[RMDB]
RNA sequence: GGGAACGACUCGAGUAGAGUCGAAAAGUGCCUCGUCGGCACGGCAUGCCAACCUGAUCCGAAGUUCAAGGUGGUUUCUCUGGCCUUCCAGAGAGAUGCGCGUCGGAAGAACCGACGAACAAACCUUAAAACAAAACGACGUUCGCGUCGUUUUGAACUUUGUCUGGAUGUUCGCAUCCAGACAAAGAAAAGAAACAACAACAACAAC
Reactivity to 2A3 in 0.01 (KOAc 150mM, MgCl2 10mM, bicine 150mM(pH8.5), 24C), signal-to-noise 2, nucleotides 027 to 156: g020u010g020c010c040u130c100g170u040c060g030g010c020a000c010g000g030c030a050u110g000c000c030a100a090c050c010u000g020a090u000c040c110g190a190a070g070u100u070c030a070a020g000g000u000g010g000u010u100u020c010u000c000u000g030g000c040c060u230u140c040c000a000g000a000g000a010g000a040u040g060c120g010c000g070u010c000g040g030a060a050g030a070a140c000c010g000a000c020g020a070a020c010a040a010a060c030c010u130u220a040a080a010a060c000a010a000a010a000c000g000a000c000g020u000u070c240g000c020g050u010c000g000u030u010u000u000g000a010a000
The record gives the reactivity of an RNA of 207 nucleotides to 2A3. For 2A3 the reverse transcriptase was SuperScript II with manganese. The reactions ran in a buffer of 150 mM KOAc, 10 mM MgCl2 and 150 mM bicine (pH 8.5), at 24 C.